[RMDB]
RNA sequence: GGGAACGACUCGAGUAGAGUCGAAAAUGAACCUUCGGGUUCACUCGAUUCCUAAGUCUUGUCAGUCGACAACUUUCUAUGAAGUGGUCGGAAACGACCAUGGAGAAAGCUAAUCGACUUGGAUUUAGAUAUGGACCGUAAUCGCGUUCGCGCGAAAGCUGAUUCUACUUUUCGAAGUAGAAUCAGCAAAAGAAACAACAACAACAAC
Reactivity to DMS in 0.01 (KOAc 150mM, MgCl2 10mM, bicine 150mM(pH8.5), 24C), signal-to-noise 1, nucleotides 027 to 156: u000g000a020a000c010c000u000u000c300g050g010g020u000u000c000a020c000u010c040g010a170u010u000c030c010u030a140a080g020u000c010u000u020g000u000c130a050g030u000c000g020a020c000a030a030c000u000u000u000c030u010a240u000g010a250a300g000u000g010g020u000c000g000g010a080a100a300c000g020a020c020c000a020u000g040g020a060g020a000a050a030g020c000u000a120a100u000c000g010a010c000u030u000g010g000a040u010u000u000a040g010a110u020a190u000g050g000a050c050c050g000u000a150a060u000c030g040c000g020u010u000c250g040c110g020c010g000a020a120a240
Reactivity to 2A3 in 0.01 (KOAc 150mM, MgCl2 10mM, bicine 150mM(pH8.5), 24C), signal-to-noise 5, nucleotides 027 to 156: u070g000a000a020c010c000u070u070c300g110g000g000u010u000c000a030c040u120c030g150a170u140u100c010c010u040a110a020g010u000c000u030u060g040u070c020a000g000u000c000g010a010c020a080a030c020u070u000u000c010u040a300u100g020a030a010g000u000g000g000u000c010g040g000a060a060a080c010g000a000c000c000a000u020g000g000a010g000a000a000a010g000c090u130a110a090u020c000g000a000c000u010u080g050g010a010u190u160u160a020g010a020u050a050u130g050g010a040c040c070g160u200a080a140u110c020g000c000g060u040u080c190g000c010g010c000g140a050a070a000